Overview:
Structure probing data (DMS and 2A3) for a 177-nucleotide construct. The reactions ran in a buffer of 150 mM KOAc, 10 mM MgCl2 and 150 mM bicine (pH 8.5), at 24 C.
RNA sequence: GGGAACGACUCGAGUAGAGUCGAAAACGUGCGACCAAACGCCGAACCGCGAUGACGCGCCAACCCUUCCAGAUCAACACCGUUCGGCUGUUGCUGCACUAACAGCGUUUUACCGCUGCCGGUACAAGUUGCACCUAAGAUUCGUCUUAGGUGCAACAAAAGAAACAACAACAACAAC
Reactivity to DMS in 0.01 (KOAc 150mM, MgCl2 10mM, bicine 150mM(pH8.5), 24C), signal-to-noise 4, nucleotides 027 to 126: c160g010u000g020c000g020a070c170c110a060a070a070c050g010c010c020g010a060a030c070c110g020c080g010a100u000g010a060c080g000c080g000c050c070a050a110c030c020c010u000u010c040c050a110g000a090u010c020a030a080c040a060c060c090g010u010u000c020g000g010c050u010g030u000u010g000c070u010g000c010a020c040u020a100a110c010a010g010c010g000u010u000u020u000a090c210c010g010c000u000g010c050c030g010g010u010a090c170a080a080
Reactivity to 2A3 in 0.01 (KOAc 150mM, MgCl2 10mM, bicine 150mM(pH8.5), 24C), signal-to-noise 2, nucleotides 027 to 126: c040g000u040g000c010g000a050c000c050a080a020a030c050g000c000c000g000a040a020c020c010g000c040g080a110u130g020a030c040g050c010g000c080c020a090a100c020c000c000u110u030c030c010a100g000a250u110c040a060a060c020a040c070c030g020u080u060c040g060g000c080u080g060u040u060g000c030u040g000c010a020c080u040a080a030c010a020g000c020g010u070u110u170u190a050c030c010g000c030u010g030c020c020g010g020u120a080c050a070a050
For DMS, 4,084 sequencing reads were counted. For DMS the reverse transcriptase was MarathonRT. For 2A3 the reverse transcriptase was SuperScript II with manganese.